[RMDB]
RNA sequence: GGGAACGACUCGAGUAGAGUCGAAAAGAAACACCAUUGCUGUUAACAUGUAUGCCCCCAUAACGAUACCGAUAACCGUAUUCGUUGCGCCUAAAUCAUGCCCUCGUAACGGUAUAAAUACGUUUAAUAGUAUUUGAAUAUUCGUAUUCAAAUACUAAAAAGAAACAACAACAACAAC
Reactivity to 2A3 in 0.01 (KOAc 150mM, MgCl2 10mM, bicine 150mM(pH8.5), 24C), signal-to-noise 3, nucleotides 027 to 126: g010a010a070a000c020a020c040c000a090u050u110g020c030u010g010u110u040a090a030c020a070u080g100u160a100u240g040c020c020c000c020c000a000u020a060a000c010g010a020u020a050c040c010g010a020u030a130a000c020c000g000u010a160u020u040c010g000u020u000g000c050g060c020c000u070a080a100a040u120c030a030u100g000c010c000c020u030c010g020u000a010a000c010g000g030u040a020u060a050a030a010u120a020c010g000u020u010u010a050a040
Reactivity to DMS in 0.01 (KOAc 150mM, MgCl2 10mM, bicine 150mM(pH8.5), 24C), signal-to-noise 9, nucleotides 027 to 126: g000a110a080a090c070a090c060c040a110u010u000g010c030u010g010u000u000a080a090c090a060u010g000u000a050u010g010c030c010c020c030c040a090u010a030a030c050g000a070u000a040c090c070g000a160u010a070a110c140c070g000u000a060u000u000c010g010u000u000g020c100g000c100c080u000a040a050a070u010c110a050u000g000c020c050c040u000c070g020u000a020a020c030g010g010u000a190u010a060a050a060u000a050c060g000u000u000u000a060a150

Structure probing data (2A3 and DMS) for a 177-nucleotide construct. It was measured as part of the RMDB library OK2TST. The 2A3 profile rests on 4,436 reads. For 2A3 the reverse transcriptase was SuperScript II with manganese. DMS adducts were read by reverse transcription with MarathonRT. For DMS, 13,810 sequencing reads were counted. The RNA was probed in 150 mM KOAc, 10 mM MgCl2 and 150 mM bicine (pH 8.5) at 24 C.